Structure probing data (2A3 and DMS) for a 177-nucleotide construct. DMS adducts were read by reverse transcription with MarathonRT. In probing experiments dimethyl sulfate is read out at A N1 and C N3, which are open when not base-paired.
RNA sequence: GGGAACGACUCGAGUAGAGUCGAAAAUCCACCACGCCGUGCUGUCACGUUCUCGGUACCCUCGAUUUCCGUCUCUUCUUGCAUGCGUAUCCAACCGCCUCGCGGCUCCGCCGACCCCCAUGGACCGUGAGGCAGAAAUGUUCGCAUUUCUGCCUCAAAAAGAAACAACAACAACAAC
Reactivity to 2A3 in 0.01 (KOAc 150mM, MgCl2 10mM, bicine 150mM(pH8.5), 24C), signal-to-noise 4, nucleotides 027 to 126: u020c010c000a020c020c020a050c040g040c010c010g070u070g020c020u020g030u080c010a020c100g060u090u020c050u010c030g030g030u070a090c000c010c010u020c040g040a060u040u000u050c030c020g070u020c030u010c000u150u010c000u010u070g030c070a050u070g030c020g040u040a070u010c020c010a000a080c010c010g010c020c000u020c000g030c000g020g000c040u010c010c010g000c000c000g030a110c000c000c000c000c000a020u040g020g000a030c020c020g040
Reactivity to DMS in 0.01 (KOAc 150mM, MgCl2 10mM, bicine 150mM(pH8.5), 24C), signal-to-noise 3, nucleotides 027 to 126: u020c040c010a110c080c050a100c110g020c030c030g010u020g010c040u010g000u040c080a110c080g000u010u000c010u010c020g020g010u010a120c090c010c020u000c110g000a080u010u010u010c060c050g020u000c070u000c020u030u000c000u000u030g000c120a080u040g030c050g000u000a060u010c050c060a100a160c060c120g000c000c020u000c030g020c030g000g000c080u000c030c020g000c040c040g000a280c020c020c010c010c020a080u000g000g010a040c030c010g000
Values cover nucleotides 27 to 126.